[RMDB]
RNA sequence: GGGAACGACUCGAGUAGAGUCGAAAACUUUGGGUUCGCCCAAAGAAAAAUCCUAAGUCCUCUGAGGCUGAAGACAUGAUGGAAUCGGAAACGAUUUACAUCAACAGCUUCAGCUCCCCACCAGAGGAUAUGGAAAAAAGUAUCCUUCGGGAUACAACUAUAACCCAUUCUUCGGAAUGGGUUAUAGAAAAGAAACAACAACAACAAC
Reactivity to 2A3 in 0.01 (KOAc 150mM, MgCl2 10mM, bicine 150mM(pH8.5), 24C), signal-to-noise 2, nucleotides 027 to 156: c010u020u010u000g020g000g030u050u070c240g110c050c010c000a000a000a000g020a030a080a010a010a010u020c010c010u030a120a050g020u000c000c000u000c000u010g010a000g020g000c000u000g010a000a000g010a060c040a080u060g000a000u000g000g030a020a000u010c000g000g050a110a030a030c040g010a000u020u010u080a100c000a000u020c000a020a030c030a040g000c000u000u000c000a000g000c000u060c020c000c000c010a050c000c000a000g000a000g000g000a010u010a020u050g000g020a030a040a040a160a010a040g040u050a000u060c000c000u030u050c260g110g000g000a000u000a010c010a010a010
Reactivity to DMS in 0.01 (KOAc 150mM, MgCl2 10mM, bicine 150mM(pH8.5), 24C), signal-to-noise 1, nucleotides 027 to 156: c040u000u000u000g010g000g040u010u000c300g090c000c000c000a000a030a030g040a000a050a050a110a250u000c010c000u000a120a150g000u000c000c010u000c000u000g000a300g010g080c000u000g000a010a000g000a030c060a300u000g010a020u020g040g000a020a010u000c000g000g000a130a150a300c000g000a010u000u000u020a080c000a010u000c000a040a060c080a150g000c000u000u000c000a040g000c050u000c130c010c010c050a300c110c020a000g010a000g000g010a010u000a030u000g000g000a000a050a030a130a040a150g000u000a020u000c000c000u000u010c300g100g000g000a040u010a060c000a030a270